[RMDB]
RNA sequence: GGGAACGACUCGAGUAGAGUCGAAAAUGAGAGGUGCCUGGAGCGCCUGCAGGCAUCUCUGUUUUCAAAAUGGCGCAUACCAGUCUUCAAGGUCAAAACAUUAUAUUGAUUUGGCAACUGAGUAUAAUCAAUUGCAUAAGUUCGCUUAUGCAAUUGAAAAAGAAACAACAACAACAAC
Reactivity to DMS in 0.01 (KOAc 150mM, MgCl2 10mM, bicine 150mM(pH8.5), 24C), signal-to-noise 2, nucleotides 027 to 126: u000g000a050g030a030g010g010u000g010c010c000u000g000g000a170g000c010g000c010c000u000g020c020a020g010g010c000a010u010c000u010c000u000g010u020u000u000u010c110a040a110a100a050u000g010g010c010g020c010a100u000a010c020c010a020g000u020c130u010u000c150a050a090g020g010u000c020a010a000a080a110c120a070u010u010a110u000a110u030u000g000a080u000u000u000g020g000c070a130a030c010u010g010a100g010u000a010u010a100a170

Conditions: 150 mM KOAc, 10 mM MgCl2 and 150 mM bicine (pH 8.5), 24 C. The record gives the reactivity of an RNA of 177 nucleotides to DMS.